[RMDB]
RNA sequence: GGGAACGACUCGAGUAGAGUCGAAAACGAUGAAGCGUUCGACGCGCCCGGCCUCGGUUCGCCGCACGCGCAGAUAGGUGGCGACGAGCGCGUCGACGACGUCGACGAUCUCGUCGGCCGAGAACGAUCACUCCGACCACUUCGGUGGUCGGAGUGAAAAAGAAACAACAACAACAAC
Reactivity to DMS in 0.01 (KOAc 150mM, MgCl2 10mM, bicine 150mM(pH8.5), 24C), signal-to-noise 1, nucleotides 027 to 126: c060g020a090u020g000a060a190g000c000g000u000u020c000g020a080c070g000c000g020c020c110c010g020g010c010c050u030c090g050g000u010u000c240g010c010c000g050c300a070c150g000c020g000c030a150g020a090u020a100g000g010u010g010g040c000g030a000c020g000a000g000c100g040c000g000u000c000g010a000c010g000a150c190g010u000c000g010a020c000g010a030u000c030u000c010g010u000c000g000g040c020c010g000a080g010a040a050c030g010a140